[RMDB]
RNA sequence: GGGAACGACUCGAGUAGAGUCGAAAAAGGCAGGUACGUUUUAGAAGUUUGUAUCAAGCAGUGAAACAGGUAUUGUUGUUACUUCUGGGAUAUUUGUUGUACAAACUGGGCAUUCCAAGUUUUGAUAAUUCGCGUAAAUGUUCGCAUUUACGCGAAUAAAAGAAACAACAACAACAAC
Reactivity to DMS in 0.01 (KOAc 150mM, MgCl2 10mM, bicine 150mM(pH8.5), 24C), signal-to-noise 1, nucleotides 027 to 126: a110g000g000c000a030g020g010u000a040c090g040u010u010u000u010a110g000a130a040g020u010u020u000g020u000a040u020c080a120a070g020c070a060g000u010g010a100a140a120c060a050g030g020u000a060u010u010g000u000u000g000u000u000a050c050u020u000c000u000g000g010g020a100u000a080u000u020u030g010u000u000g010u000a040c090a000a010a060c080u000g020g020g010c050a120u000u020c030c030a020a100g010u000u000u000u000g000a150u010a070